Notes:
Structure probing data (2A3 and DMS) for a 177-nucleotide construct. It was measured as part of the RMDB library OK2TRN. For 2A3 the reverse transcriptase was SuperScript II with manganese. The DMS profile rests on 14,222 reads. The 2A3 profile rests on 15,491 reads. Values cover nucleotides 27 to 126. DMS (dimethyl sulfate) methylates the pairing face of unpaired adenines and cytosines. For DMS the reverse transcriptase was MarathonRT.

[RMDB]
RNA sequence: GGGAACGACUCGAGUAGAGUCGAAAACGCGCGACGCGCAACAUCGACUUGAGCCUCGGCUUCGAGCGAGGCGCGCGCGUGAUGUUCGGCGUCUCGCUGCACGGCAAUCUGAAGCGCGCGUCGAUGAAUCAGGUAUCAUGUUCGCAUGAUACCUGAUAAAAGAAACAACAACAACAAC
Reactivity to 2A3 in 0.01 (KOAc 150mM, MgCl2 10mM, bicine 150mM(pH8.5), 24C), signal-to-noise 7, nucleotides 027 to 126: c040g020c000g000c030g090a170c040g050c000g000c020a030a050c020a130u070c020g200a240c080u040u090g050a020g010c000c030u080c150g120g000c030u140u110c100g050a030g010c000g000a010g000g000c000g000c000g000c000g010c000g010u050g050a090u140g060u080u070c000g040g010c010g010u030c030u020c080g040c020u050g010c060a050c060g040g000c080a100a120u070c050u130g040a060a000g000c000g010c000g010c000g030u020c010g000a050u060g040a010
Reactivity to DMS in 0.01 (KOAc 150mM, MgCl2 10mM, bicine 150mM(pH8.5), 24C), signal-to-noise 8, nucleotides 027 to 126: c070g010c050g020c010g010a080c040g010c010g020c020a130a150c160a090u000c020g000a100c050u000u000g010a120g010c020c030u010c180g020g010c030u000u010c100g000a040g010c020g000a020g010g010c000g010c000g010c080g010c060g010u000g010a070u010g010u000u010c020g010g000c000g010u000c020u000c020g010c010u000g000c100a130c180g000g000c140a090a100u010c060u010g000a090a050g010c070g020c300g020c060g010u000c000g000a040u000g000a130